[RMDB]
RNA sequence: GGGAACGACUCGAGUAGAGUCGAAAAGAUAUGGAUCCUAUUCAGCGAUGAGUCGGAUCGGAAACGAUCCGAGCGAGCUGAAGAGGAUCCUAAGUCAAAGCGUAAGUGGCUUCGGCCACUUACGCAACAGACCAUAUUAGUUCGCUAAUAUGGUCUGAAAAGAAACAACAACAACAAC
Reactivity to DMS in 0.01 (KOAc 150mM, MgCl2 10mM, bicine 150mM(pH8.5), 24C), signal-to-noise 7, nucleotides 027 to 126: g000a030u000a300u010g000g000a000u000c000c000u000a080u000u000c000a010g010c010g010a180u010g010a100g020u000c000g000g000a010u000c000g010g010a090a090a190c010g000a010u000c000c000g010a010g010c020g000a220g000c000u000g000a010a010g010a020g000g000a000u000c000c000u000a000a080g010u000c040a080a100a130g010c000g020u000a000a010g020u000g010g000c000u000u010c220g030g000c000c000a010c010u000u000a000c000g010c010a020a080
Reactivity to 2A3 in 0.01 (KOAc 150mM, MgCl2 10mM, bicine 150mM(pH8.5), 24C), signal-to-noise 7, nucleotides 027 to 126: g040a020u070a040u140g010g000a000u000c000c010u020a060u030u000c000a010g020c040g250a300u150g060a160g300u030c010g000g000a000u000c010g000g000a030a040a010c010g000a010u000c000c000g020a030g050c020g030a020g000c000u000g010a000a000g000a020g010g000a000u000c000c000u000a040a000g030u010c050a120a090a010g000c000g000u000a010a000g000u010g030g000c020u080u160c300g030g000c000c000a000c000u010u000a000c000g000c010a000a000
The record gives the reactivity of an RNA of 177 nucleotides to DMS and 2A3.
The DMS profile rests on 15,722 reads.
DMS (dimethyl sulfate) methylates the pairing face of unpaired adenines and cytosines.
It was measured as part of the RMDB library TTRDEL.
The reactions ran in a buffer of 150 mM KOAc, 10 mM MgCl2 and 150 mM bicine (pH 8.5), at 24 C.
For 2A3 the reverse transcriptase was SuperScript II with manganese.
The 2A3 profile rests on 30,893 reads.